Structure probing data (2A3 and DMS) for a 177-nucleotide construct. The RNA was probed in 150 mM KOAc, 10 mM MgCl2 and 150 mM bicine (pH 8.5) at 24 C. The DMS profile rests on 2,934 reads. DMS (dimethyl sulfate) methylates the pairing face of unpaired adenines and cytosines. 2A3 adducts were read by reverse transcription with SuperScript II with manganese. For DMS the reverse transcriptase was MarathonRT.
RNA sequence: GGGAACGACUCGAGUAGAGUCGAAAAGCAUACAACUUCGGUUGUAUGCAACGACAGAGUUGACUGUCAUAAACAACGUAACAUGUGAGUUACAAUAACACAUUGCAGCAGCUUUCGAGCUGCUGAAUUCGAAGUACGAAUUCGUUCGUACUUCGAAAAAAGAAACAACAACAACAAC
Reactivity to 2A3 in 0.01 (KOAc 150mM, MgCl2 10mM, bicine 150mM(pH8.5), 24C), signal-to-noise 3, nucleotides 027 to 126: g010c000a000u000a010c010a000a000c000u060u040c150g130g000u000u000g000u000a010u020g000c010a000a010c060g020a000c000a010g020a000g040u020u030g050a170c010u000g000u000c010a020u120a030a110a010c040a010a030c080g080u080a010a040c030a070u120g080u070g240a110g060u050u050a030c000a040a050u150a070a010c060a000c020a110u040u300g040c000a000g010c000a000g000c000u080u120u180c220g120a020g000c000u000g000c000u000g000a000a010
Reactivity to DMS in 0.01 (KOAc 150mM, MgCl2 10mM, bicine 150mM(pH8.5), 24C), signal-to-noise 3, nucleotides 027 to 126: g000c010a000u000a000c010a020a010c000u000u010c190g030g000u000u000g000u010a000u000g020c000a030a000c150g000a010c000a000g000a050g000u000u000g000a160c000u000g000u000c040a090u000a040a100a130c080a060a060c170g010u000a100a100c110a090u020g010u010g000a090g010u000u010a050c050a100a030u010a090a070c070a040c070a070u010u010g010c010a000g010c000a010g020c000u000u020u020c230g010a040g000c000u010g000c000u000g000a030a080